[RMDB]
RNA sequence: GGGAACGACUCGAGUAGAGUCGAAAAUGCCUGCCUCCUGUCUCCAUUUGUUUUUAGUAGAUUUUGCACAGAAAAACAUGUUGACCUCGGUACUGAAAUUUUGGAGUUCACUAUUUGCGGCACAGUUACAGAUCACAGAAAAAAAUGUACAACAGGAAAUUUUACCUCGAUUCGUCGAGGUAAAAUUAAAAGAAACAACAACAACAAC
Reactivity to DMS in 0.01 (KOAc 150mM, MgCl2 10mM, bicine 150mM(pH8.5), 24C), signal-to-noise 1, nucleotides 027 to 156: u010g030c040c050u000g050c120c020u000c020c020u000g000u000c020u000c110c050a090u000u000u000g000u000u000u000u020u020a170g020u000a240g000a100u000u000u000u000g010c050a130c130a170g000a130a080a070a140a050c030a120u000g020u000u000g010a090c050c040u000c080g010g030u000a110c010u000g040a080a020a150u010u010u010u000g020g000a150g020u010u010c050a030c070u020a060u020u000u000g000c000g010g020c000a100c060a090g000u000u010a040c130a080g050a080u000c050a050c030a130g010a010a000a010a010a070a100a060u000g010u010a040c060a020a050c090a010g000g000a090
Reactivity to 2A3 in 0.01 (KOAc 150mM, MgCl2 10mM, bicine 150mM(pH8.5), 24C), signal-to-noise 2, nucleotides 027 to 156: u100g020c030c000u040g010c000c020u000c010c010u000g030u010c020u020c040c010a060u010u020u040g040u000u070u010u000u080a090g020u060a020g060a140u090u120u080u160g050c090a090c030a060g130a060a150a000a010a000c010a050u030g020u000u060g070a090c000c010u030c030g020g000u010a020c000u020g110a100a130a150u140u130u030u030g030g020a050g010u020u020c030a030c070u070a070u090u070u230g030c020g020g000c030a000c010a080g030u000u070a010c010a040g080a060u070c050a020c070a020g240a000a070a010a040a040a040a020u190g050u270a050c040a040a010c000a050g060g000a050
The data come from the RNA Mapping Database (RMDB), library OK3TST. Chemical mapping of a 207-nucleotide RNA with DMS and 2A3. For 2A3 the reverse transcriptase was SuperScript II with manganese. Reactivities are given for positions 27 through 156. The RNA was probed in 150 mM KOAc, 10 mM MgCl2 and 150 mM bicine (pH 8.5) at 24 C.